About this RNA: Source: RMDB library OK2TRN, as collected in RNAgym. An RNA of 177 nucleotides, treated with 2A3 and DMS and read out base by base.

RNA sequence: GGGAACGACUCGAGUAGAGUCGAAAACUAUCAGAUAGGAAGGGCUGUUUCACAAAAUGUACUUCUAAGUAAUUGCUCCAUAGAUCCUAUAUCUAUCUAUAUGAAGAAGAAAUCAUGUAAUGAGGGGUCAUGCACAUGCAUUCGUGCAUGUGCAUGAAAAAGAAACAACAACAACAAC
Reactivity to 2A3 in 0.01 (KOAc 150mM, MgCl2 10mM, bicine 150mM(pH8.5), 24C), signal-to-noise 1, nucleotides 027 to 126: c000u010a040u160c020a050g070a170u090a020g010g080a030a000g080g040g000c000u000g060u010u020u090c070a040c050a080a120a110a140u190g080u070a070c010u050u140c100u080a230a070g050u000a060a100u110u080g050c010u060c020c000a020u050a110g050a070u000c030c050u160a100u060a010u300c010u010a090u010c010u000a070u010a050u160g020a050a040g020a080a010g050a030a070a020u070c060a000u040g080u120a070a080u050g050a020g030g000g000g000
Reactivity to DMS in 0.01 (KOAc 150mM, MgCl2 10mM, bicine 150mM(pH8.5), 24C), signal-to-noise 2, nucleotides 027 to 126: c050u000a060u020c080a060g000a100u000a060g010g040a080a090g000g000g010c050u010g010u000u010u000c090a070c210a050a050a110a070u000g010u010a070c000u000u020c090u010a060a150g000u030a070a040u000u010g000c060u000c060c080a070u000a070g010a070u010c080c060u010a140u010a130u010c000u000a020u000c040u010a050u000a050u000g000a070a070g000a050a080g000a090a090a110u000c010a000u000g000u000a050a040u000g010a070g010g000g000g020
Reactivities are given for positions 27 through 126.